[RMDB]
RNA sequence: GGGAACGACUCGAGUAGAGUCGAAAAGAUAUGGAUCCCUUUCAACGCGUCACGUGUGGGAGAUAUUGUGGUCGGAAACGACCAUGUAUCGAAGAACACACGUGACGUAUCAAGGGAUCCUAAGUCACAAAACAACUUGGUUCGCCAAGUUGUUUUGAAAAGAAACAACAACAACAAC
Reactivity to 2A3 in 0.01 (KOAc 150mM, MgCl2 10mM, bicine 150mM(pH8.5), 24C), signal-to-noise 3, nucleotides 027 to 126: g010a000u050a030u110g000g000a000u010c040c000c000u000u020u030c130a050a000c050g010c000g020u010c010a010c000g000u000g000u000g020g210g040a100g000a010u010a020u100u300g040u000g020g010u000c010g000g030a040a030a050c000g000a000c000c010a000u010g000u000a000u000c030g090a260a050g110a200a020c000a000c010a000c010g000u010g000a000c000g000u000a000u000c000a000a000g000g000g000a000u000c000c000u000a010a000g000u020c000a030
Reactivity to DMS in 0.01 (KOAc 150mM, MgCl2 10mM, bicine 150mM(pH8.5), 24C), signal-to-noise 6, nucleotides 027 to 126: g010a040u000a300u010g000g000a010u000c000c000c000u000u000u000c260a130a080c180g010c000g010u000c000a000c000g000u000g010u010g000g000g010a110g010a010u000a000u000u020g080u000g000g010u000c000g000g000a120a100a200c010g010a020c010c000a020u010g010u000a010u000c000g010a100a190g000a170a230c010a010c000a000c000g010u000g010a000c000g030u000a010u000c220a020a030g000g000g000a000u000c000c000u000a010a060g010u000c020a240